Chemical mapping of a 170-nucleotide RNA with DMS and 2A3.
It was measured as part of the RMDB library 15KLIB.
For 2A3 the reverse transcriptase was SuperScript II with manganese.
For DMS the reverse transcriptase was MarathonRT.
The DMS profile rests on 19,554 reads.
[RMDB]
RNA sequence: GGGAACGACUCGAGUAGAGUCGAAAACGGCGGAGGAGCUCCCUCCCCGUCCUUCCCUUUUCUUAUUAUUCCGAGGAUGUUUCCCAGCCAGGGAUUUUCGUCCUCGAGUUUCUUGAUGGUUCUCCUGGUGGCAAGUUGUUCGCAACUUGCAAAAGAAACAACAACAACAAC
Reactivity to DMS in 0.01 (KOAc 150mM, MgCl2 10mM, bicine 150mM(pH8.5), 24C), signal-to-noise 4, nucleotides 027 to 129: c040g020g000c220g060g030a000g040g020a180g000c270u040c100c000c020u030c010c010c000c010g040u000c050c080u000u000c000c000c060u040u040u040u050c110u080u050a140u000u000a120u060u040c140c040g000a000g000g040a010u010g050u000u000u000c020c000c060a100g040c160c180a210g000g050g020a000u000u000u000u000c030g040u000c000c000u020c010g010a020g030u040u000u070c030u050u030g000a160u070g000g000u030u000c040u000c020c030u010g020g010u000g030
Reactivity to 2A3 in 0.01 (KOAc 150mM, MgCl2 10mM, bicine 150mM(pH8.5), 24C), signal-to-noise 3, nucleotides 027 to 129: c020g010g030c230g000g000a020g000g030a120g030c020u130c010c020c010u010c000c000c000c000g000u020c000c000u000u020c000c030c000u030u070u040u050c020u020u130a200u050u030a110u120u070c080c050g000a010g000g010a020u000g010u010u010u010c010c010c000a070g120c130c050a100g000g000g000a020u070u030u020u080c010g000u030c000c000u000c000g020a010g010u020u040u020c050u020u040g110a100u140g020g000u050u000c020u050c000c020u020g020g000u010g090